[RMDB]
RNA sequence: GGGAACGACUCGAGUAGAGUCGAAAAGGCCAGACCUAGAUGUCGCCCGGCCUGUGGAUGGCCGAUCUGUACGGCUACGCAGUAGGCGAUGACUACCGCUGGCAUUGGAGAGAGUAUGGCGGACACGCAGAGGAAGACGAUGCUGAGUAUCGAGCUGCUUAAAUGAAACAUUCGUGUUUCAUUUAAGAAAAGAAACAACAACAACAAC
Reactivity to DMS in 0.01 (KOAc 150mM, MgCl2 10mM, bicine 150mM(pH8.5), 24C), signal-to-noise 5, nucleotides 027 to 156: g030g010c020c010a100g010a080c000c020u010a080g030a060u010g000u000c030g000c020c020c040g040g020c240c000u000g030u000g010g010a150u000g040g030c000c000g020a040u000c110u010g000u000a210c030g020g010c020u000a090c050g030c000a040g020u000a070g010g000c020g000a070u000g010a130c010u000a040c020c020g020c010u000g010g030c020a170u020u000g000g000a070g010a090g010a110g020u000a100u010g010g000c040g000g010a120c070a090c080g000c060a100g020a090g000g010a090a080g010a080c040g000a090u010g010c020u010g010a130g010u000a120u010c040g000a110g020c040u010g000
Reactivity to 2A3 in 0.01 (KOAc 150mM, MgCl2 10mM, bicine 150mM(pH8.5), 24C), signal-to-noise 9, nucleotides 027 to 156: g060g000c000c010a000g010a180c010c030u050a050g010a130u090g010u000c010g020c010c010c010g180g040c040c020u020g000u030g050g110a280u120g050g000c020c010g020a100u070c090u190g160u180a070c010g010g000c010u010a020c020g000c010a010g000u080a030g020g000c010g020a030u030g080a040c020u040a040c010c090g010c020u000g000g000c010a020u030u110g020g000a040g000a000g000a010g030u080a060u140g040g010c020g040g000a040c030a010c100g040c050a020g010a030g050g030a030a030g020a010c040g020a030u070g020c030u040g030a040g050u050a060u130c060g020a020g020c020u050g000
The data come from the RNA Mapping Database (RMDB), library OK3TST. Structure probing data (DMS and 2A3) for a 207-nucleotide construct. DMS adducts were read by reverse transcription with MarathonRT. For 2A3, 14,344 sequencing reads were counted. The RNA was probed in 150 mM KOAc, 10 mM MgCl2 and 150 mM bicine (pH 8.5) at 24 C. Values cover nucleotides 27 to 156.